[RMDB]
RNA sequence: GGGAACGACUCGAGUAGAGUCGAAAAAGAGAGCGACAGGCCCCACAGGGCUUCGGCUCCACUGCGGUACUUAGGAGCGUGCCACCACGGUGAGCCUGGCGUGGGGCAGGGCUAGUGAGGAGGCAGGGUCUCGUGACAAAUUCGUUUGUCACGAGACAAAAGAAACAACAACAACAAC
Reactivity to DMS in 0.01 (KOAc 150mM, MgCl2 10mM, bicine 150mM(pH8.5), 24C), signal-to-noise 3, nucleotides 027 to 126: a080g010a130g010a100g010c080g010a100c140a130g000g000c010c010c010c070a050c160a290g020g020g000c010u000u000c300g010g010c030u000c100c040a030c030u010g000c060g010g010u000a060c090u000u020a100g040g010a070g020c100g030u000g000c050c060a080c020c030a040c040g020g020u000g000a070g010c020c000u000g000g000c030g000u000g000g000g010g010c000a020g000g000g000c040u000a060g030u010g000a070g010g000a090g000g000c070a060g010g010
Reactivity to 2A3 in 0.01 (KOAc 150mM, MgCl2 10mM, bicine 150mM(pH8.5), 24C), signal-to-noise 1, nucleotides 027 to 126: a000g110a010g000a020g010c040g120a090c070a100g090g000c000c000c040c020a050c010a050g200g110g000c000u060u000c030g030g000c000u010c000c030a020c040u070g000c050g040g040u080a040c040u100u210a120g140g030a030g090c040g030u050g030c000c010a100c020c010a060c050g100g010u050g030a010g040c010c020u020g020g010c010g020u010g000g000g000g000c000a010g020g000g000c010u040a040g070u060g110a020g020g030a030g000g020c020a030g090g050